Annotation:
This 207-nucleotide RNA was probed chemically with DMS and 2A3. 2A3 adducts were read by reverse transcription with SuperScript II with manganese. Values are in units of 0.01, from 0 to 300, in steps of 10. The 2A3 profile rests on 2,437 reads. The reactions ran in a buffer of 150 mM KOAc, 10 mM MgCl2 and 150 mM bicine (pH 8.5), at 24 C.
[RMDB]
RNA sequence: GGGAACGACUCGAGUAGAGUCGAAAAGGACUCCGUGAGGAGUCCGUGCAGCGAGAGCUGCACAAGCGGUAAUAGUGUCUCGGUCCGCGAGCUCAUCGAUGUGGAGAUGAGCUCUGUAGUAGCCGCACGAUUUAUAGUGCGGCAUACGAGAGACAGGAUCUAUCUACUCAUUCGUGAGUAGAUAGAUAAAAGAAACAACAACAACAAC
Reactivity to DMS in 0.01 (KOAc 150mM, MgCl2 10mM, bicine 150mM(pH8.5), 24C), signal-to-noise 2, nucleotides 027 to 156: g020g000a030c000u000c010c010g030u010g010a240g030g000a020g000u010c010c020g030u000g020c000a000g030c000g000a290g000a300g030c000u010g000c020a010c000a030a110g030c030g000g010u010a090a060u010a090g030u010g000u000c000u000c030g000g010u000c030c020g050c000g040a020g020c020u000c010a020u000c000g000a230u010g030u020g030g020a300g010a030u000g000a020g020c000u000c010u020g000u020a140g020u000a070g010c000c030g000c020a010c020g010a230u010u000u010a130u000a130g000u000g050c030g010g010c040a010u010a010c010g010a150g000a060g010a010c010a080g000g010
Reactivity to 2A3 in 0.01 (KOAc 150mM, MgCl2 10mM, bicine 150mM(pH8.5), 24C), signal-to-noise 3, nucleotides 027 to 156: g000g000a000c000u000c000c000g010u030g040a030g000g000a000g000u000c000c000g010u000g000c000a000g010c010g020a040g000a000g030c000u000g010c010a000c000a010a020g000c010g000g050u100a090a040u030a200g140u040g000u010c000u000c010g020g040u030c000c000g010c000g000a000g000c000u000c000a000u010c010g100a140u140g090u150g170g120a110g000a040u000g010a000g000c000u000c010u000g000u000a020g000u000a000g000c000c000g000c010a000c000g030a010u020u300u120a160u120a070g000u000g000c000g000g000c000a000u010a000c020g010a030g000a000g000a010c000a000g020g050